[RMDB]
RNA sequence: GGGAACGACUCGAGUAGAGUCGAAAAGCUGCUUCUUCUUGUUCUCGAGGGCUUUCCUUCUUCGGUGAGCCCGCCUCUCCUCGUCGGUGAAGUCUCCCGCGCGGGUCCUCUUCCUAGGUCCGGAAUCACAGUCGCGACUUCGGUCGCGACAAAAGAAACAACAACAACAAC
Reactivity to DMS in 0.01 (KOAc 150mM, MgCl2 10mM, bicine 150mM(pH8.5), 24C), signal-to-noise 2, nucleotides 027 to 129: g070c060u000g010c040u000u000c040u030u000c070u060u020g010u100u000c020u000c040g020a090g020g000g010c050u020u000u030c010c000u040u080c130u000u000c210g040g000u070g020a000g000c000c000c000g010c000c000u050c030u060c090c060u000c020g050u060c020g060g030u020g020a050a040g030u020c060u020c000c080c020g070c050g020c060g000g030g010u000c020c040u010c080u010u070c050c040u030a060g090g030u030c030c030g010g030a100a080u030c130a120c030a080
Reactivity to 2A3 in 0.01 (KOAc 150mM, MgCl2 10mM, bicine 150mM(pH8.5), 24C), signal-to-noise 2, nucleotides 027 to 129: g070c010u100g000c000u030u040c020u020u020c000u060u120g070u010u000c010u010c030g050a080g030g000g000c000u010u000u020c000c010u140u270c080u130u150c090g060g010u010g000a000g070c000c010c000g000c000c000u010c000u000c000c000u000c040g170u020c060g110g000u070g010a040a030g040u020c030u010c030c000c010g060c020g000c010g010g010g000u010c010c000u010c010u000u000c000c000u000a030g020g070u010c000c020g020g010a030a010u080c040a020c030a140